[RMDB]
RNA sequence: GGGAACGACUCGAGUAGAGUCGAAAAUAACAGACAAUGCCACAACAGAAAGCAACGCGCAGUGAACUCAGGAUUAAGGACAGGCAGGCGGCGGCAGCUCCUGGCCGCUUCCGGCAUAUACGCCAAAGUCGAGUCUGUUCUUCGGGGCAGAUUCGACAAAAGAAACAACAACAACAAC
Reactivity to 2A3 in 0.01 (KOAc 150mM, MgCl2 10mM, bicine 150mM(pH8.5), 24C), signal-to-noise 9, nucleotides 027 to 126: u110a010a030c020a010g130a030c030a050a100u100g020c010c020a040c030a130a030c020a050g140a090a090a010g040c030a030a060c030g010c010g000c040a020g020u030g120a050a020c020u010c050a030g050g020a070u110u140a080a050g040g010a040c020a010g020g050c010a010g010g010c010g010g000c000g010g000c010a020g020c010u030c020c020u030g040g010c000c000g000c000u030u010c010c000g000g000c000a010u070a010u020a110c080g020c010c000a060a030a000
Reactivity to DMS in 0.01 (KOAc 150mM, MgCl2 10mM, bicine 150mM(pH8.5), 24C), signal-to-noise 9, nucleotides 027 to 126: u040a100a090c130a080g010a080c080a080a060u030g010c020c020a070c060a070a080c110a080g000a090a080a070g000c080a050a040c080g000c050g000c040a050g000u010g010a080a060c050u000c040a070g000g000a080u020u020a080a070g010g000a060c050a050g000g010c050a050g000g010c050g010g010c020g000g010c020a060g020c060u010c040c030u000g010g000c010c020g010c030u000u000c030c020g000g000c020a040u020a050u020a050c090g000c030c040a050a060a110